[RMDB]
RNA sequence: GGGAACGACUCGAGUAGAGUCGAAAAACCCACCUCCAGAGGACCCCUUCAGCGAACAGAAGGCACCCUCGGGCGGUAGGAGUAAGCCCGUAGCCGGGGGAAGAUGCUAGGAGUAAGGGGCGACCGAGAUUAAUUUCUUGUUCGCAAGAAAUUAAUCAAAAGAAACAACAACAACAAC
Reactivity to DMS in 0.01 (KOAc 150mM, MgCl2 10mM, bicine 150mM(pH8.5), 24C), signal-to-noise 2, nucleotides 027 to 126: a040c020c000c010a300c010c020u000c020c030a220g060a120g030g000a180c060c140c010c010u000u010c030a110g000c020g020a030a040c020a160g030a140a140g000g010c070a070c020c010c000u000c000g030g000g020c010g000g010u010a100g010g020a140g060u020a070a230g000c110c010c010g010u000a170g020c000c020g020g010g000g000g010a210a020g010a260u000g010c040u000a130g000g030a120g010u010a030a040g010g000g000g010c030g000a000c000c020g000a110
Reactivity to 2A3 in 0.01 (KOAc 150mM, MgCl2 10mM, bicine 150mM(pH8.5), 24C), signal-to-noise 2, nucleotides 027 to 126: a000c000c010c010a010c020c040u070c040c030a060g000a140g230g010a220c000c050c000c000u030u010c020a030g010c020g050a090a020c010a070g140a200a070g030g010c000a020c000c010c000u000c000g000g020g000c040g000g050u080a080g000g140a220g070u130a040a040g040c000c000c010g040u080a070g130c000c000g020g000g000g010g000a040a060g120a060u160g000c000u020a050g030g100a100g070u040a010a010g030g000g000g000c010g040a000c000c000g050a030
Structure probing data (DMS and 2A3) for a 177-nucleotide construct. The DMS profile rests on 1,156 reads. The data come from the RNA Mapping Database (RMDB), library VIROID. The reactions ran in a buffer of 150 mM KOAc, 10 mM MgCl2 and 150 mM bicine (pH 8.5), at 24 C.